[RMDB]
RNA sequence: GGGAACGACUCGAGUAGAGUCGAAAAGACUUGUGGUUCGCCACAAGUCAAAUAAGCAUGUAGAAAUGGCCAAAGUACAUGCAUCGAAAGAAAGGCCAUAAAAAAGGACAUGCUUCGGCAUGUCCAACUUGGAUUAAAAGUUCGCUUUUAAUCCAAGAAAAGAAACAACAACAACAAC
Reactivity to DMS in 0.01 (KOAc 150mM, MgCl2 10mM, bicine 150mM(pH8.5), 24C), signal-to-noise 4, nucleotides 027 to 126: g000a000c000u000u000g020u000g000g010u000u020c220g020c000c000a000c000a000a010g000u010c000a020a050a060u000a130a110g010c000a000u010g000u000a040g000a040a090a020u000g010g020c000c020a140a090a110g010u000a000c000a000u010g010c010a100u000c140g000a100a090a120g000a060a130a110g000g010c010c010a050u030a000a030a060a080a060a080g000g000a010c000a010u000g010c000u000u010c170g030g010c000a010u000g000u000c000c000a010a030
Reactivity to 2A3 in 0.01 (KOAc 150mM, MgCl2 10mM, bicine 150mM(pH8.5), 24C), signal-to-noise 7, nucleotides 027 to 126: g010a000c000u000u000g000u010g030g040u050u080c200g040c060c000a000c000a000a000g000u000c000a000a000a010u010a010a010g010c000a000u010g000u010a020g130a170a210a040u030g010g000c010c010a080a050a030g050u010a010c000a010u010g020c010a040u150c080g170a100a100a110g110a070a130a020g010g000c010c010a000u080a000a060a000a010a000a010g010g000a000c000a000u000g010c020u030u040c140g060g000c000a000u000g000u000c000c000a000a000
This 177-nucleotide RNA was probed chemically with DMS and 2A3. For 2A3, 16,788 sequencing reads were counted. For 2A3 the reverse transcriptase was SuperScript II with manganese. Values cover nucleotides 27 to 126.